[RMDB]
RNA sequence: GGGAACGACUCGAGUAGAGUCGAAAAGAUAUGGAGCUCUUCGGGAGAUCGAUGCAGUCGGAAACGACUGGGCAGAUCUUUGAUCGAGAGAGCUCCUAAGUCAAACGUCUUGGUUCGCCAAGACGAACGAUAUCUGAGAGUUCGCUCUCAGAUAUCGAAAAGAAACAACAACAACAAC
Reactivity to DMS in 0.01 (KOAc 150mM, MgCl2 10mM, bicine 150mM(pH8.5), 24C), signal-to-noise 5, nucleotides 027 to 126: g000a020u000a300u010g000g020a010g000c000u000c000u000u000c010g000g000g000a010g010a010u000c000g000a200u010g000c010a020g000u000c000g010g010a090a080a180c010g010a010c000u000g010g010g030c200a260g000a000u000c000u010u000u010g000a060u000c010g000a060g000a030g010a010g000c000u000c000c000u010a010a020g000u000c030a130a110a300c000g010u000c000u000u000g000g010u010u020c230g020c010c000a010a000g000a010c000g000a020a050
Reactivity to 2A3 in 0.01 (KOAc 150mM, MgCl2 10mM, bicine 150mM(pH8.5), 24C), signal-to-noise 3, nucleotides 027 to 126: g010a000u050a020u160g000g000a010g000c000u010c000u030u010c010g030g020g000a030g000a010u010c020g030a060u260g220c010a000g010u020c010g030g000a030a050a070c020g000a010c000u000g000g170g030c080a020g010a020u020c000u050u070u010g020a030u030c020g000a030g020a010g000a000g220c000u000c000c000u000a020a010g010u000c030a050a070a120c010g000u000c000u020u020g020g050u050u090c300g030c110c000a000a000g010a010c000g000a040a010